[RMDB]
RNA sequence: GGGAACGACUCGAGUAGAGUCGAAAAGAAAGAAAGAACCCUUCCCGCGGGGCUGGAUCUUCCAGAUGGUGCGGGCCGGGACAAGCCGGAGAGUGCCCCGGUUUCAGAAACAACCUUCGGCAGCCAAACUAGACUACCCACUUCGGUGGGUAGUCAACUAAACACUAUGGUUCGCCAUAGUGUUUAGAAAAGAAACAACAACAACAAC
Reactivity to 2A3 in 0.01 (KOAc 150mM, MgCl2 10mM, bicine 150mM(pH8.5), 24C), signal-to-noise 1, nucleotides 027 to 156: g020a010a040a000g020a030a100a030g060a150a210c030c000c040u010u010c000c000c030g010c000g010g010g000g020c000u010g020g020a110u160c100u140u060c140c000a000g000a040u030g030g120u030g000c010g000g000g000c000c000g000g010g000a010c020a040a000g000c020c040g000g010a030g010a000g000u020g030c000c000c000c000g000g020u020u050u050c000a000g050a000a060a010c040a010a010c000c000u000u000c020g020g000c010a080g030c070c110a070a100a100c110u090a040g000a010c000u000a000c000c000c000a000c000u020u010c240g100g000u010g000g000g000u000a000g010u010c000a000a000